[RMDB]
RNA sequence: GGGAACGACUCGAGUAGAGUCGAAAACGACAUGGCUUCGGCCAUGUCGAAAGGACGAGUGAGACCGAAACGGAGGUAGGUCCAACUAGCUUCUCACUCAAAAAAUCCGUUUGUUCGCAAACGGAAACAUUUUCAGUAGCUUCGGCUACUGAAAAUGAAAAGAAACAACAACAACAAC
Reactivity to DMS in 0.01 (KOAc 150mM, MgCl2 10mM, bicine 150mM(pH8.5), 24C), signal-to-noise 2, nucleotides 027 to 126: c020g000a020c000a000u010g010g020c000u000u010c180g030g000c020c000a010u000g000u000c000g000a020a050a140g030g010a150c150g010a010g000u000g000a010g010a030c300c060g000a080a060a090c160g010g020a120g010g000u010a040g000g010u010c020c070a040a180c070u000a090g030c120u000u030c020u000c010a010c010u000c020a000a000a080a060a080a120u000c000c000g020u000u000u000g000u000u030c220g040c020a010a000a000c000g000g000a020a030a100
Reactivity to 2A3 in 0.01 (KOAc 150mM, MgCl2 10mM, bicine 150mM(pH8.5), 24C), signal-to-noise 1, nucleotides 027 to 126: c010g000a000c020a000u000g000g010c020u050u000c180g080g020c000c000a000u000g010u010c000g000a000a000a000g070g030a020c070g000a000g020u020g000a010g000a040c010c040g050a090a090a020c090g010g050a020g050g120u190a070g010g180u020c010c000a030a040c030u060a020g060c030u070u050c000u010c010a020c000u000c000a060a050a050a030a000a030u010c000c000g010u000u000u020g060u020u030c240g000c120a000a010a000c000g000g000a000a080a000
An RNA of 177 nucleotides, treated with DMS and 2A3 and read out base by base.
For DMS the reverse transcriptase was MarathonRT.
The reactions ran in a buffer of 150 mM KOAc, 10 mM MgCl2 and 150 mM bicine (pH 8.5), at 24 C.
Values cover nucleotides 27 to 126.